[RMDB]
RNA sequence: GGGAACGACUCGAGUAGAGUCGAAAAGAUAUGGACUACCCACCGCUACGGACGGCAGGUCGGAAACGACCUGAACUACCGUCCGAGUAGCGAGGUCCUAAGUCAAAGAGACUGUUCGCAGUCUCAAUCUUCUAUAAGAGUUCGCUCUUAUAGAAGAAAAAGAAACAACAACAACAAC
Reactivity to DMS in 0.01 (KOAc 150mM, MgCl2 10mM, bicine 150mM(pH8.5), 24C), signal-to-noise 6, nucleotides 027 to 126: g010a070u000a180u000g010g010a020c000u000a110c010c020c010a300c120c010g010c010u000a040c010g000g000a020c000g000g000c010a020g010g000u010c000g000g000a090a100a140c010g000a020c010c000u000g000a040a020c050u010a300c030c010g000u000c000c000g000a050g020u000a000g010c010g000a110g020g010u000c010c010u010a100a120g010u010c070a080a080a180g010a020g000a010c000u000g000u010u020c180g020c000a010g000u000c000u000c000a070a060
Reactivity to 2A3 in 0.01 (KOAc 150mM, MgCl2 10mM, bicine 150mM(pH8.5), 24C), signal-to-noise 4, nucleotides 027 to 126: g020a020u140a100u210g010g000a000c010u160a240c030c020c020a010c000c020g020c000u010a010c010g000g020a000c020g000g020c000a000g010g000u000c020g030g020a090a080a060c020g010a010c000c010u000g000a010a020c010u110a060c010c000g000u000c000c010g020a040g000u000a000g000c000g000a020g000g000u000c010c010u050a300a070g150u120c100a100a120a040g010a010g000a010c010u010g030u060u140c300g010c180a000g010u010c000u000c020a000a020